[RMDB]
RNA sequence: GGGAACGACUCGAGUAGAGUCGAAAAGGAAGUCACCCUUGAGGGCUGUCACACAGCACUUUUGUAUAAUUAGAAAAUGGUGUCCUUCCUCAAGACACUUUCCAUUUAUCAGAAAAUAGUUGUGAUGUACAAACAUGCAAAGGCUAGCCAGGCAUGACUAUUUUAAAUCGUUCGCGAUUUAAAAUAGAAAAGAAACAACAACAACAAC
Reactivity to 2A3 in 0.01 (KOAc 150mM, MgCl2 10mM, bicine 150mM(pH8.5), 24C), signal-to-noise 2, nucleotides 027 to 156: g030g010a000a000g030u070c020a020c000c020c000u020u030g040a010g000g030g000c020u000g060u160c010a010c000a000c020a150g050c010a000c000u040u040u100u060g060u040a180u090a300a220u180u180a060g110a040a180a050a090u130g000g000u010g030u020c020c020u000u010c000c010u010c000a050a030g050a030c030a000c000u030u080u050c000c030a070u060u110u100a110u180c100a040g110a070a190a050a050u150a140g010u000u030g000u020g060a110u070g020u050a040c060a060a160a040c000a010u000g040c010a100a210a000g030g000c020u040a030g050c000c030a070g070g000c010a000u000g020a030
Reactivity to DMS in 0.01 (KOAc 150mM, MgCl2 10mM, bicine 150mM(pH8.5), 24C), signal-to-noise 1, nucleotides 027 to 156: g000g000a110a060g030u000c040a050c060c040c000u020u010g000a010g050g030g040c050u010g000u030c090a040c110a300c010a130g000c050a050c060u000u000u000u000g010u010a050u040a020a130u010u000a120g000a020a000a040a100u020g040g010u000g020u000c070c000u000u020c080c060u000c080a110a080g010a060c050a040c000u000u010u000c000c010a040u000u000u000a100u030c070a080g010a050a060a210a160u000a110g010u010u000g000u000g040a090u010g050u000a190c110a070a030a080c030a050u000g010c060a150a150a070g000g050c080u000a070g020c040c050a170g030g000c000a050u000g020a300
Source: RMDB library OK3TST, as collected in RNAgym. This 207-nucleotide RNA was probed chemically with 2A3 and DMS. For 2A3 the reverse transcriptase was SuperScript II with manganese. Values are in units of 0.01, from 0 to 300, in steps of 10. The RNA was probed in 150 mM KOAc, 10 mM MgCl2 and 150 mM bicine (pH 8.5) at 24 C.